[RMDB]
RNA sequence: GGGAACGACUCGAGUAGAGUCGAAAACUUCGGGUAGCGUUGUAUUCAUUUGUGGGAAUUUGUUUUCAAGUUCCCCUAUUACUGUGAGCAAAUUAGAGUGUUCAAAGCAGACGAUGUUUGAAUACAUUACAUACGAUAUCUUCGGAUAUCGUAUGUAAAAAGAAACAACAACAACAAC
Reactivity to DMS in 0.01 (KOAc 150mM, MgCl2 10mM, bicine 150mM(pH8.5), 24C), signal-to-noise 4, nucleotides 027 to 126: c040u010u020c050g020g010g020u000a050g010c090g020u010u000g000u010a030u010u000c050a050u000u010u010g010u040g020g000g000a010a000u010u000u000g000u010u020u010u010c020a010a010g000u010u000c000c000c000c030u000a020u010u010a080c070u020g000u000g010a050g010c040a030a060a080u020u020a100g020a160g030u010g010u000u000c020a060a060a100g000c020a040g010a130c180g000a100u010g010u010u000u010g000a030a020u000a020c040a100u020
Reactivity to 2A3 in 0.01 (KOAc 150mM, MgCl2 10mM, bicine 150mM(pH8.5), 24C), signal-to-noise 7, nucleotides 027 to 126: c010u090u070c040g050g000g080u100a050g030c030g050u050u030g020u030a060u030u050c050a070u060u060u160g140u240g010g010g000a010a000u010u010u020g220u040u190u100u240c010a000a000g000u000u000c000c000c000c010u010a060u070u070a070c030u030g060u060g070a030g030c040a030a050a090u140u120a130g080a070g160u050g000u000u030c030a080a070a080g020c020a030g060a170c110g100a120u070g080u040u020u030g020a020a010u010a020c010a020u010
An RNA of 177 nucleotides, treated with DMS and 2A3 and read out base by base. The reactions ran in a buffer of 150 mM KOAc, 10 mM MgCl2 and 150 mM bicine (pH 8.5), at 24 C. In probing experiments dimethyl sulfate is read out at A N1 and C N3, which are open when not base-paired. It was measured as part of the RMDB libraries RFM100 and RFMREP.